[RMDB]
RNA sequence: GGGAACGACUCGAGUAGAGUCGAAAAGUCUGUGCGUUUCCACUUGAGUAUCCUGAAAACGGGCUUUUCAGCAUGGAACGUACAUAUUAAAUAGUAGGAGUGCAUAGUGGCCCGUAUAGCAGGCAUUGAGGCGAGGAUUGUUUCGACAAUCCUCGAACAUUGUGCCCAGUUUCGACUGGGCACAAUGAAAAGAAACAACAACAACAAC
Reactivity to DMS in 0.01 (KOAc 150mM, MgCl2 10mM, bicine 150mM(pH8.5), 24C), signal-to-noise 2, nucleotides 027 to 156: g010u000c080u000g020u000g000c020g050u000u000u000c000c030a030c050u000u020g020a130g020u010a100u000c040c010u020g020a050a060a100a110c010g070g000g000c030u000u000u000u000c030a150g040c040a050u000g050g000a070a060c050g020u000a140c030a060u000a050u010u000a110a110a280u000a080g020u010a050g010g020a160g000u010g000c040a130u000a150g000u000g020g020c040c050c050g050u000a080u000a180g030c010a040g010g040c100a150u000u000g000a140g010g030c000g000a030g000g010a020u000u010g020u010u000u000c280g000a030c000a030a010u000c000c000u000c000g010a020a100
Reactivity to 2A3 in 0.01 (KOAc 150mM, MgCl2 10mM, bicine 150mM(pH8.5), 24C), signal-to-noise 2, nucleotides 027 to 156: g070u050c100u100g020u040g050c030g020u000u060u000c030c020a050c010u060u020g010a020g060u070a100u140c030c020u020g060a050a060a010a000c000g000g010g000c010u110u080u060u120c030a020g000c010a030u040g010g070a110a040c000g030u020a010c000a000u030a010u010u210a080a130a080u160a030g030u020a020g010g070a070g050u000g000c030a060u070a210g120u060g130g010c010c000c040g000u020a030u070a040g050c010a020g020g000c030a030u060u100g040a020g020g080c000g000a010g000g000a000u000u000g010u000u110u040c080g020a000c000a000a000u010c000c010u000c000g000a000a000
This 207-nucleotide RNA was probed chemically with DMS and 2A3. It was measured as part of the RMDB library M2RFPK. The RNA was probed in 150 mM KOAc, 10 mM MgCl2 and 150 mM bicine (pH 8.5) at 24 C. For DMS, 2,857 sequencing reads were counted. 2A3 adducts were read by reverse transcription with SuperScript II with manganese. DMS adducts were read by reverse transcription with MarathonRT. Reactivities are given for positions 27 through 156.